[RMDB]
About this RNA:
Chemical mapping of a 177-nucleotide RNA with DMS and 2A3.

RNA sequence: GGGAACGACUCGAGUAGAGUCGAAAAGCAAAUAAUGGGCGCCCAAGGUGAGAUGAAGCUGUAGUCUCACUGGAUGGACUAGAGGUUAGAGGAGACCCGCCCAAAACAAGAAACAGCAAGAAAAAAAACAUGAUUAUAGUUUCGACUAUAAUCAUGUAAAAGAAACAACAACAACAAC
Reactivity to DMS in 0.01 (KOAc 150mM, MgCl2 10mM, bicine 150mM(pH8.5), 24C), signal-to-noise 2, nucleotides 027 to 126: g030c070a060a030a110u000a110a180u000g000g010g030c010g000c010c000c000a160a200g010g000u000g000a010g010a000u000g010a010a300g030c000u000g000u010a300g000u000c020u000c010a030c000u000g000g010a150u000g010g020a070c010u010a080g000a190g020g010u020u010a110g000a190g000g030a190g030a000c080c030c000g000c000c000c000a020a090a130a110c160a080a100g000a130a130a010c000a000g060c050a160a040g050a020a010a000a030a100a070a100
Reactivity to 2A3 in 0.01 (KOAc 150mM, MgCl2 10mM, bicine 150mM(pH8.5), 24C), signal-to-noise 2, nucleotides 027 to 126: g070c000a010a090a120u260a150a140u250g000g000g040c010g030c010c010c000a000a000g000g000u000g000a000g000a000u010g010a010a020g010c020u010g010u010a000g000u000c000u000c010a000c000u000g000g000a040u060g000g010a030c080u090a130g000a040g150g020u050u050a070g090a240g300g090a040g010a020c000c000c000g000c000c000c000a040a110a000a030c090a080a080g130a090a070a000c010a000g030c060a070a080g140a140a100a070a000a000a000a000
The RNA was probed in 150 mM KOAc, 10 mM MgCl2 and 150 mM bicine (pH 8.5) at 24 C. It was measured as part of the RMDB library M2PK90. DMS (dimethyl sulfate) methylates the pairing face of unpaired adenines and cytosines.